[RMDB]
RNA sequence: GGGAACGACUCGAGUAGAGUCGAAAAGAUAUGGAAUAGUGGAGCUUCAAGUGCGUUUGACGCACCGUACGUUCGGAAACGAACGUACGGUGCCGAGCACGAAGAGCGAUGAAACUAUUCCUAAGUCCCGAGUGAAUAAGUUCGCUUAUUCACUCGGAAAAGAAACAACAACAACAAC
Reactivity to DMS in 0.01 (KOAc 150mM, MgCl2 10mM, bicine 150mM(pH8.5), 24C), signal-to-noise 1, nucleotides 027 to 126: g000a080u000a300u000g010g010a010a000u000a000g030u000g020g010a050g020c000u000u000c010a090a300g010u010g000c000g000u000u010u010g000a130c300g020c000a000c000c000g000u010a000c000g000u000u000c060g000g000a120a080a210c010g020a000a000c000g020u000a000c000g000g040u010g000c010c000g000a090g040c000a000c000g030a180a280g000a000g010c010g010a060u020g000a220a190a010c010u000a000u000u000c000c010u010a070a110g040u020c010
Chemical mapping of a 177-nucleotide RNA with DMS. For DMS, 953 sequencing reads were counted. Values are in units of 0.01, from 0 to 300, in steps of 10.